Annotation
The record gives the reactivity of an RNA of 177 nucleotides to 2A3 and DMS. The RNA was probed in 150 mM KOAc, 10 mM MgCl2 and 150 mM bicine (pH 8.5) at 24 C. As a SHAPE reagent, 2A3 marks flexible, mostly unpaired nucleotides at the ribose 2'-OH. DMS adducts were read by reverse transcription with MarathonRT.
RNA sequence: GGGAACGACUCGAGUAGAGUCGAAAAUUUUUUGAACACAAAAUUUGGAGUUUCUUGAGGAGACCUCACAACUUUGUGUUUUGUAGACAUGAACUCUUCGGGAAAACGUUUAAUUUUAUGACUAUUCGCUAUUAUCGGUAUUCGUACCGAUAAUAGCAAAAGAAACAACAACAACAAC
Reactivity to 2A3 in 0.01 (KOAc 150mM, MgCl2 10mM, bicine 150mM(pH8.5), 24C), signal-to-noise 5, nucleotides 027 to 126: u070u060u040u030u030u170g100a090a000c040a000c030a040a060a020a050u060u050u110g040g010a110g010u030u020u030c000u050u130g070a060g110g010a000g050a050c000c030u070c030a130c030a060a060c050u070u060u120g050u020g000u030u010u050u160g090u080a030g030a020c050a150u130g100a110a090c000u000c000u000u030c010g010g010g040a030a060a020a040c010g030u030u070u190a110a100u050u100u080u120a120u140g060a050c060u060a160u150u170c060
Reactivity to DMS in 0.01 (KOAc 150mM, MgCl2 10mM, bicine 150mM(pH8.5), 24C), signal-to-noise 1, nucleotides 027 to 126: u010u010u000u020u020u010g000a050a040c070a040c010a000a040a010a010u000u000u010g000g000a230g000u000u030u000c000u020u020g000a080g050g010a000g020a030c200c060u000c050a050c270a040a060c130u040u010u020g030u000g020u000u000u010u000g000u030a120g000a070c110a020u010g000a040a070c080u000c000u010u020c010g000g000g020a020a040a040a080c010g010u070u020u000a000a000u020u020u000u010a040u000g000a110c080u000a080u000u050c100